[RMDB]
RNA sequence: GGGAACGACUCGAGUAGAGUCGAAAAAUAUUAACCUUAAAUGUAAAUGGAGUAAAUGCCCCAAUUAAAAGACACAGACUGGCAAAUUGGAUAGUCAAGACCCAUCGAUGUGCUAUAUUCAGGAGACCCAUCUCACGUGCAAAGACACACAUAGGCACAUUUAAUCGAUAUUCGUAUCGAUUAAAUGAAAAGAAACAACAACAACAAC
Reactivity to DMS in 0.01 (KOAc 150mM, MgCl2 10mM, bicine 150mM(pH8.5), 24C), signal-to-noise 3, nucleotides 027 to 156: a080u010a120u000u000a080a190c030c020u010u010a040a080a130u010g010u000a090a070a130u000g030g030a120g010u000a040a140a140u000g020c000c020c000c020a040a130u010u010a050a110a120a120g000a070c040a070c030a080g010a080c070u000g010g000c060a040a060a100u000u000g010g020a070u000a070g010u000c030a060a120g000a070c060c010c010a080u000c050g020a100u000g020u000g010c020u000a060u000a090u000u010c040a070g050g000a130g010a050c000c010c080a070u000c040u010c020a060c070g020u000g020c020a040a090a090g000a070c040a020c050a050c020a090u000a030g020g000c050a130
Reactivity to 2A3 in 0.01 (KOAc 150mM, MgCl2 10mM, bicine 150mM(pH8.5), 24C), signal-to-noise 3, nucleotides 027 to 156: a040u210a060u130u120a080a070c020c010u080u100a130a120a100u120g030u090a100a130a100u150g030g020a060g040u050a040a090a120u100g010c030c000c000c000a000a010u090u090a090a100a050a020g040a030c040a000c040a100g070a060c030u010g000g030c030a050a040a180u060u080g040g010a060u060a060g000u050c010a010a020g030a070c000c000c030a030u070c050g060a050u040g030u010g050c020u060a040u010a050u270u130c020a010g000g050a020g020a020c020c010c010a070u020c030u010c020a050c050g000u000g000c030a100a080a080g070a030c010a000c000a000c020a070u060a060g060g010c020a000

This 207-nucleotide RNA was probed chemically with DMS and 2A3. For 2A3, 2,793 sequencing reads were counted. For 2A3 the reverse transcriptase was SuperScript II with manganese.